RNA sequence: GGGAACGACUCGAGUAGAGUCGAAAAUAGGCGAACGAGAGGCCCUCUCUUGUGCGGAGUUGUCACGCUGACACAAUUGUUAUGAUGUCCGAUUCCGGUAGCAUCGCGGCGAUGUUUUCAUAGGACAUCUUAUGAACCCAAGAGCUUCGGGGAAGCACAGUAAUACGCUGUUCGCAGCGUAUUACUGAAAAGAAACAACAACAACAAC
Reactivity to DMS in 0.01 (KOAc 150mM, MgCl2 10mM, bicine 150mM(pH8.5), 24C), signal-to-noise 3, nucleotides 027 to 156: u010a140g020g010c020g000a090a050c020g000a060g030a090g020g010c060c030c020u010c010u010c020u000u000g020u000g030c040g000g010a210g010u000u010g030u020c020a100c130g030c040u020g010a100c040a090c030a150a180u000u020g020u000u010a070u000g000a060u000g000u010c000c010g000a260u000u000c090c080g020g000u000a040g000c030a030u000c010g020c120g000g000c160g020a040u010g010u010u000u000u000c050a050u010a130g030g000a050c040a010u000c000u010u000a030u000g010a070a120c050c030c040a090a100g000a130g040c020u000u010c030g010g030g000g040a100a070g000c020a130
Reactivity to 2A3 in 0.01 (KOAc 150mM, MgCl2 10mM, bicine 150mM(pH8.5), 24C), signal-to-noise 3, nucleotides 027 to 156: u140a040g060g000c040g070a040a020c060g000a080g000a010g130g050c020c080c000u080c010u000c000u020u060g000u020g020c030g030g030a050g020u070u090g000u070c040a050c150g050c060u030g020a010c010a010c030a140a190u110u140g050u100u070a070u080g010a000u020g020u000c000c000g010a070u190u050c090c010g070g040u050a020g000c010a010u030c020g010c100g230g020c100g000a010u030g000u020u090u040u060c040a050u090a040g010g000a010c000a020u000c000u000u010a090u030g070a020a030c000c000c020a050a020g070a000g090c000u070u070c140g040g020g020g030a030a020g010c030a000